RNA sequence: GGGAACGACUCGAGUAGAGUCGAAAAAUAGCAACCAUCAAAGAUCGCAUUUGACAGUUAUGGCAAAAGGACGGCAACGUCAGCGCGUUCCGAGACGCAACGGUCGCCGACGAUAAAAUCGUAUCGAAUUAUGACGAAAAUUCGUUUUCGUCAUAAUAAAAGAAACAACAACAACAAC
Reactivity to DMS in 0.01 (KOAc 150mM, MgCl2 10mM, bicine 150mM(pH8.5), 24C), signal-to-noise 9, nucleotides 027 to 126: a060u020a090g010c080a080a100c040c010a120u020c080a060a100a090g000a050u010c060g010c050a130u010u010u010g010a050c090a070g000u020u010a060u010g010g010c040a030a040a090a090g010g010a110c030g010g000c110a060a070c040g010u010c030a070g010c160g010c030g010u000u000c050c090g010a180g010a040c100g010c070a090a080c090g000g010u000c030g010c020c020g000a070c010g000a040u010a050a050a040a300u010c050g000u010a040u000c060g010a140
Reactivity to 2A3 in 0.01 (KOAc 150mM, MgCl2 10mM, bicine 150mM(pH8.5), 24C), signal-to-noise 9, nucleotides 027 to 126: a000u180a020g040c030a020a040c020c020a030u100c060a050a060a040g060a060u080c050g020c090a080u030u020u110g050a040c030a030g030u090u090a090u120g040g010c020a030a050a050a060g080g020a030c020g020g000c010a050a020c040g040u040c050a050g010c050g000c000g060u110u030c050c040g030a050g010a040c040g010c060a060a020c020g030g030u040c020g000c020c010g020a030c000g010a010u100a080a110a020a030u090c060g020u070a050u090c020g010a010

The record gives the reactivity of an RNA of 177 nucleotides to DMS and 2A3. For 2A3 the reverse transcriptase was SuperScript II with manganese. The RNA was probed in 150 mM KOAc, 10 mM MgCl2 and 150 mM bicine (pH 8.5) at 24 C. Source: RMDB libraries RFM100 and RFMREP, as collected in RNAgym.